This 177-nucleotide RNA was probed chemically with 2A3 and DMS.
The reactions ran in a buffer of 150 mM KOAc, 10 mM MgCl2 and 150 mM bicine (pH 8.5), at 24 C.
Values cover nucleotides 27 to 126.
RNA sequence: GGGAACGACUCGAGUAGAGUCGAAAAUUAUACAAGAGAAGAAAACCAAAAGGCACAGUUGGACUACAAUGUAGCCCUUGUCUAAUGUCAAAGGCGACAAGUACUGAUGAUAUUAUUUGGGACCAACUGGUCUGUCUCAAUUCGUUGAGACAGACCAAAAAGAAACAACAACAACAAC
Reactivity to 2A3 in 0.01 (KOAc 150mM, MgCl2 10mM, bicine 150mM(pH8.5), 24C), signal-to-noise 2, nucleotides 027 to 126: u110u000a030u020a090c140a060a100g010a000g020a130a010g030a050a170a000a000c030c000a000a090a000a090g030g000c060a040c010a050g000u030u090g010g000a110c010u140a000c130a060a110u280g020u000a010g060c000c000c010u000u000g000u040c060u020a040a050u120g020u030c060a000a030a000g050g060c070g000a160c230a070a050g050u030a270c020u020g080a030u070g000a020u040a010u070u090a040u080u000u000g000g010g010a020c020c000a000a000c010
Reactivity to DMS in 0.01 (KOAc 150mM, MgCl2 10mM, bicine 150mM(pH8.5), 24C), signal-to-noise 2, nucleotides 027 to 126: u000u040a110u060a070c150a080a100g000a100g030a140a120g000a050a160a060a110c000c010a040a030a120a120g010g000c070a020c120a000g020u080u030g010g000a300c090u010a010c050a050a140u000g020u000a070g020c000c000c000u000u000g010u000c030u000a050a060u000g000u000c050a010a100a120g000g050c000g000a110c050a080a190g000u050a120c010u010g000a190u010g000a100u000a020u000u000a010u020u000u000g000g000g050a290c000c040a040a060c020